Chemical mapping of a 177-nucleotide RNA with DMS and 2A3. The data come from the RNA Mapping Database (RMDB), library OK1LIB. DMS adducts were read by reverse transcription with MarathonRT. Reactivities are given for positions 27 through 126. The DMS profile rests on 1,154 reads. For 2A3 the reverse transcriptase was SuperScript II with manganese. 2A3 is a SHAPE reagent: it acylates the 2'-hydroxyl of flexible nucleotides of all four kinds.
[RMDB]
RNA sequence: GGGAACGACUCGAGUAGAGUCGAAAAACAAAUUCCAAACAGGGAGCAGCCGGAUUCACACAACAGGUCGCAGCACUCGAUACUGUCUUCUCUUCCUGCUACUGGCUAUGGAAGUCAGGUGUGACAGGCCAUAAGGCUGGUUCGCCAGCCUUAUGGCAAAAGAAACAACAACAACAAC
Reactivity to DMS in 0.01 (KOAc 150mM, MgCl2 10mM, bicine 150mM(pH8.5), 24C), signal-to-noise 1, nucleotides 027 to 126: a000c100a040a040a180u000u000c020c000a130a040a050c110a020g020g020g010a080g000c190a080g000c060c000g010g000a060u080u000c020a070c110a030c080a090a050c170a060g030g000u010c050g000c100a010g060c150a030c080u000c100g010a000u000a070c020u010g000u000c040u020u000c030u000c020u000u000c080c000u100g000c060u000a030c020u000g000g000c040u020a160u040g000g000a100a080g000u000c000a060g000g090u010g000u100g000a200c100a040g000
Reactivity to 2A3 in 0.01 (KOAc 150mM, MgCl2 10mM, bicine 150mM(pH8.5), 24C), signal-to-noise 3, nucleotides 027 to 126: a010c120a000a010a060u140u160c040c060a140a140a010c140a090g080g030g000a050g010c030a000g010c000c020g000g000a040u060u060c030a010c000a000c000a150a070c010a020g020g020u050c040g020c040a030g080c000a050c060u120c030g020a040u050a110c060u030g060u110c000u040u010c040u000c000u000u000c020c010u030g050c000u020a120c060u120g020g010c010u000a090u300g150g040a040a030g010u020c000a010g070g130u130g000u070g090a010c070a040g040